[RMDB]
RNA sequence: GGGAACGACUCGAGUAGAGUCGAAAAAGAUAAAAACACGACCCUCAUGGCAGAAAGUACAGGGUCAGGAGGAGGUGGUAAUGGAUGGGGAAGAAUGGAAAUCCAGGUGAAUCGACCACCAGGAUACGCCUGAGUAAGGAUUCGUCCUUACUCAGGCAAAAGAAACAACAACAACAAC
Reactivity to DMS in 0.01 (KOAc 150mM, MgCl2 10mM, bicine 150mM(pH8.5), 24C), signal-to-noise 2, nucleotides 027 to 126: a150g010a150u010a040a020a150a070a090c050a130c090g000a090c000c000c000u000c080a160u010g000g000c060a160g000a060a040a140g030u000a030c140a080g030g000g010u000c020a030g000g010a080g010g000a140g020g040u000g000g000u010a020a020u040g000g010a050u010g020g010g000g030a020a070g010a040a080u010g020g000a080a050a050u000c000c010a050g030g010u000g000a090a090u000c110g000a150c090c010a000c000c000a060g000g000a050u000a040c180
Reactivity to 2A3 in 0.01 (KOAc 150mM, MgCl2 10mM, bicine 150mM(pH8.5), 24C), signal-to-noise 1, nucleotides 027 to 126: a000g110a050u300a080a130a000a000a030c020a000c050g000a000c010c000c010u000c040a060u100g050g000c060a020g180a260a070a040g110u060a060c070a090g030g000g000u070c060a000g020g000a050g020g000a050g030g030u070g000g050u100a110a060u180g020g060a070u030g010g000g070g000a100a000g080a140a090u110g040g070a170a000a000u000c000c010a000g020g000u010g040a020a060u120c030g100a110c030c010a010c000c010a000g060g010a040u080a060c130